An RNA of 177 nucleotides, treated with 2A3 and DMS and read out base by base. DMS adducts were read by reverse transcription with MarathonRT. Conditions: 150 mM KOAc, 10 mM MgCl2 and 150 mM bicine (pH 8.5), 24 C.
RNA sequence: GGGAACGACUCGAGUAGAGUCGAAAAAAAGUUAGCGUACUAGAGUCGCCGUGUGUACGCUAUGGUUCCGUGAGACUCUACUCGAGCGUAUCACGGAACCCACGUACAUACCGUACGUGCUAUAAAACCUAAUACAGAUAUUCGUAUCUGUAUUAGGAAAAGAAACAACAACAACAAC
Reactivity to 2A3 in 0.01 (KOAc 150mM, MgCl2 10mM, bicine 150mM(pH8.5), 24C), signal-to-noise 9, nucleotides 027 to 126: a000a000a020g100u020u010a000g000c000g000u000a000c020u040a030g090a100g150u110c060g040c100c040g110u120g020u010g000u060a000c000g000c000u010a020u030g060g000u070u010c030c020g010u030g010a050g000a010c000u000c000u010a000c010u010c010g000a000g000c010g000u020a060u040c020a010c020g020g030a020a030c010c000c010a000c000g010u000a000c000a070u140a200c020c050g000u000a000c000g000u000g010c020u060a110u100a230a090a020a030
Reactivity to DMS in 0.01 (KOAc 150mM, MgCl2 10mM, bicine 150mM(pH8.5), 24C), signal-to-noise 9, nucleotides 027 to 126: a060a040a060g010u000u000a010g010c000g010u000a010c010u000a130g010a100g010u000c030g010c030c040g020u000g010u000g010u000a000c010g000c010u000a010u000g010g000u000u000c020c020g010u010g010a220g000a020c000u000c000u000a020c020u000c020g000a020g000c050g010u000a080u010c030a040c020g010g000a040a050c050c090c020a010c000g010u000a000c000a120u010a090c300c170g000u000a000c000g010u000g010c090u010a090u000a050a060a090a110